Chemical mapping of a 207-nucleotide RNA with 2A3. The reactions ran in a buffer of 150 mM KOAc, 10 mM MgCl2 and 150 mM bicine (pH 8.5), at 24 C.
[RMDB]
RNA sequence: GGGAACGACUCGAGUAGAGUCGAAAACUAGGCUGCCAUCUCGGCGCUGAAUUUACUGCAGAGCAACUUCGCCGCCAUUCAGCAGGUGAAUAAAGACAGGAAGAAUAUGAAUUUACGGUCCAUUCCGGAGACCAUCGAGUGGCUCCGACGCAUCGGGUCUUCUUUCGACAUUCGUGUCGAAAGAAGAAAAAGAAACAACAACAACAAC
Reactivity to 2A3 in 0.01 (KOAc 150mM, MgCl2 10mM, bicine 150mM(pH8.5), 24C), signal-to-noise 2, nucleotides 027 to 156: c060u030a010g000g000c040u060g000c070c030a100u130c120u110c190g040g020c020g010c010u020g070a010a020u020u070u150a080c050u050g050c050a040g010a060g090c050a050a060c060u030u020c050g000c070c030g000c080c090a090u130u150c010a040g000c030a070g040g010u080g030a020a010u170a140a110a010g070a050c020a010g050g010a070a060g020a070a060u090a090u230g050a080a080u120u110u170a070c030g040g020u060c040c050a060u020u060c000c000g010g010a030g030a190c000c000a050u070c040g030a020g150u030g030g010c010u000c020c010g030a000c050g030c080a100u080c060g060g000g000
Background
The data come from the RNA Mapping Database (RMDB), library OK3TST.